[RMDB]
RNA sequence: GGGAACGACUCGAGUAGAGUCGAAAACUGCACGGCGUUGCUCACCAGGGCGCCUACCGUGCUGAGUCCCACGGGGCUCACCGAAGAGCGGAAGAGUCGGAAGAUGGCGUACAUGGCAAGGCCGCUCGGUAGACUCUCAAUUCGUUGAGAGUCUACCAAAAGAAACAACAACAACAAC
Reactivity to 2A3 in 0.01 (KOAc 150mM, MgCl2 10mM, bicine 150mM(pH8.5), 24C), signal-to-noise 2, nucleotides 027 to 126: c020u050g000c040a000c030g020g000c050g110u040u220g020c030u050c060a140c100c100a110g040g020g000c010g000c000c010u030a030c000c000g020u030g050c030u020g030a000g010u000c020c000c010a040c110g020g000g000g020c000u030c000a030c000c030g120a230a140g020a040g180c030g020g000a120a090g020a040g090u040c030g000g040a110a050g110a130u150g060g000c030g020u050a020c020a050u050g020g000c000a010a020g090g000c010c010g020c000u020c040
Reactivity to DMS in 0.01 (KOAc 150mM, MgCl2 10mM, bicine 150mM(pH8.5), 24C), signal-to-noise 2, nucleotides 027 to 126: c060u000g020c110a060c010g010g030c300g030u000u000g010c020u010c010a070c220c300a270g000g010g000c020g010c060c080u010a100c010c010g000u010g020c020u000g000a060g020u000c010c010c030a140c280g040g000g030g020c030u000c010a080c060c050g010a120a110g010a100g000c010g000g000a060a090g010a300g010u010c000g000g000a140a140g010a070u000g000g000c060g040u010a090c030a110u000g010g010c020a020a050g020g000c000c000g030c010u000c040